[RMDB]
RNA sequence: GGGAACGACUCGAGUAGAGUCGAAAAUGGUGUUCGCACCAGGGGACCCGUAGGAUCCAUACAGGAGCGUGGUCGUUUGACGGUGCGUUCGAAAGAGCGCACCCGAGACCACGACCCUCCUGUGGAUCCUAAACGGAAAACGUGCCUUCGGGCACAAGGGAUACUUUCUUUUCGAAGAAAGUAUCCCAAAAGAAACAACAACAACAAC
Reactivity to DMS in 0.01 (KOAc 150mM, MgCl2 10mM, bicine 150mM(pH8.5), 24C), signal-to-noise 2, nucleotides 027 to 156: u030g030g010u000g000u000u000c300g010c030a050c020c000a100g080g000g020g000a300c050c000c010g040u000a040g010g010a000u000c010c020a020u000a110c150a030g020g030a060g030c070g050u010g020g000u000c000g010u000u000u000g010a210c200g000g000u000g000c000g030u000u010c000g000a220a120a280g010a020g030c010g000c000a020c020c000c010g000a110g000a040c010c000a030c010g010a010c030c070c000u000c010c070u010g090u010g030g000a000u000c000c010u000a010a010a040c040g000g000a090a050a090a150c140g020u010g000c000c010u000u000c260g020g000g020c010a000c000a040a160
Reactivity to 2A3 in 0.01 (KOAc 150mM, MgCl2 10mM, bicine 150mM(pH8.5), 24C), signal-to-noise 2, nucleotides 027 to 156: u030g000g010u010g040u060u080c270g060c080a010c010c010a010g010g020g020g020a040c000c000c020g010u020a010g000g000a000u000c000c010a050u090a300c020a010g000g000a000g040c020g010u010g010g010u000c010g030u160u180u250g030a040c040g000g000u000g010c000g010u000u000c000g000a030a060a030g000a000g010c010g000c000a000c000c000c000g010a020g000a000c000c000a000c000g000a000c040c000c000u000c000c000u020g010u000g000g000a000u000c000c010u000a000a010a000c010g020g080a030a270a010a050c100g010u020g010c010c000u060u110c210g000g020g000c000a000c010a030a040